About this RNA
The record gives the reactivity of an RNA of 177 nucleotides to DMS and 2A3. For DMS, 1,015 sequencing reads were counted. Source: RMDB library VIROID, as collected in RNAgym. The RNA was probed in 150 mM KOAc, 10 mM MgCl2 and 150 mM bicine (pH 8.5) at 24 C. The 2A3 profile rests on 1,384 reads.
[RMDB]
RNA sequence: GGGAACGACUCGAGUAGAGUCGAAAAAAGGGACUGCAAGUAUGCCCCUACACUCCUUGAUCUUGGAGCGCAACCCCGCAUAUCCAUGCAACUUGACAACCAAUGUCGCCCAUGAUGACACUCCCGACGUUUCGUAUAUCUUCGGAUAUACGAAACGAAAAGAAACAACAACAACAAC
Reactivity to DMS in 0.01 (KOAc 150mM, MgCl2 10mM, bicine 150mM(pH8.5), 24C), signal-to-noise 2, nucleotides 027 to 126: a120a040g000g010g010a060c030u000g010c130a100a100g000u000a060u000g020c030c020c010c010u020a090c060a110c030u000c020c010u010u010g010a060u000c140u000u010g020g000a060g020c100g000c090a110a080c060c000c010c100g020c090a060u010a120u010c040c050a070u010g010c070a060a070c120u000u000g010a060c100a050a050c080c100a080a160u000g010u000c010g000c030c080c040a060u020g020a110u000g020a030c100a060c130u000c030c000c000g010a150
Reactivity to 2A3 in 0.01 (KOAc 150mM, MgCl2 10mM, bicine 150mM(pH8.5), 24C), signal-to-noise 2, nucleotides 027 to 126: a010a000g070g000g030a030c090u140g000c060a090a010g080u060a110u140g010c020c000c000c000u030a020c030a030c060u000c010c000u030u040g090a160u130c060u070u090g030g010a070g010c030g000c070a030a050c030c040c030c000g000c020a090u140a040u090c030c020a020u050g040c010a020a100c020u100u030g000a070c030a000a030c070c060a100a090u070g020u110c010g010c000c010c010a040u150g030a030u050g010a020c020a020c060u010c000c000c020g080a130